[RMDB]
RNA sequence: GGGAACGACUCGAGUAGAGUCGAAAAUGCUUGAAAUAACAUGAGAUGAAAAGGUGUCUUCCCCCUUUUCCAGCGGUGGUGAGACUGCAAUAGGUUUCUGUGUUGCUUCAUGUGUGACUUGUGACAACCUGAUAGUAUUAUUCGUAAUACUAUCAGGAAAAGAAACAACAACAACAAC
Reactivity to DMS in 0.01 (KOAc 150mM, MgCl2 10mM, bicine 150mM(pH8.5), 24C), signal-to-noise 9, nucleotides 027 to 126: u010g010c040u000u000g000a060a070a070u000a050a050c040a040u010g000a080g010a100u010g000a050a040a080a070g000g010u000g010u000c110u000u000c050c020c050c020c010u000u000u000u000c060c190a100g010c110g010g020u010g010g010u010g010a070g010a040c030u000g010c060a060a080u010a110g010g000u000u000u000c020u010g020u000g010u000u000g010c040u000u000c020a030u000g010u010g010u000g010a110c120u000u000g010u010g010a130c210a080a170
Reactivity to 2A3 in 0.01 (KOAc 150mM, MgCl2 10mM, bicine 150mM(pH8.5), 24C), signal-to-noise 9, nucleotides 027 to 126: u060g000c010u030u040g030a040a060a050u100a040a020c020a040u090g060a070g030a100u110g050a020a030a020a020g060g010u040g030u050c040u030u040c010c000c000c000c010u010u030u070u060c030c020a030g010c030g070g010u090g020g030u050g020a020g020a020c030u050g010c040a030a090u070a140g090g020u020u050u000c030u040g060u000g040u050u040g000c000u000u020c020a030u030g020u000g030u030g070a050c020u060u070g050u030g070a030c020a030a040